RNA sequence: GGGAACGACUCGAGUAGAGUCGAAAAGAUAUGGAGCGACUAUGAAGUACCGUAACAUCUAUCGGAAACGAUAGUGGGUAUGGAGUCGGCUCCUAAGUCAAAACACAUGCGGUUCGCCGCAUGUGAACACUCAACGUUACUUCGGUAACGUUGAGUGAAAAGAAACAACAACAACAAC
Reactivity to DMS in 0.01 (KOAc 150mM, MgCl2 10mM, bicine 150mM(pH8.5), 24C), signal-to-noise 3, nucleotides 027 to 126: g000a060u000a300u010g010g000a040g010c000g010a020c020u000a220u000g000a100a200g010u000a010c000c000g010u010a000a100c190a020u010c010u000a000u010c000g010g000a080a100a140c010g000a020u000a000g020u000g000g000g000u000a000u000g000g000a010g010u000c000g040g020c010u010c000c020u000a010a080g020u010c010a090a070a110a190c010a000c000a000u000g000c000g000g010u000u010c290g020c000c000g000c010a000u010g020u000g000a030a160
Reactivity to 2A3 in 0.01 (KOAc 150mM, MgCl2 10mM, bicine 150mM(pH8.5), 24C), signal-to-noise 2, nucleotides 027 to 126: g010a010u040a040u200g000g020a000g010c010g000a000c010u050a300u300g090a120a020g060u010a020c020c030g030u070a080a040c020a240u110c000u000a010u010c020g080g000a120a020a050c020g010a000u000a010g020u040g060g000g000u030a040u110g000g040a000g000u030c080g210g090c010u000c000c000u030a050a020g020u010c030a020a010a210a020c000a000c010a000u010g010c020g000g090u050u090c300g060c150c000g000c000a000u000g000u000g000a000a000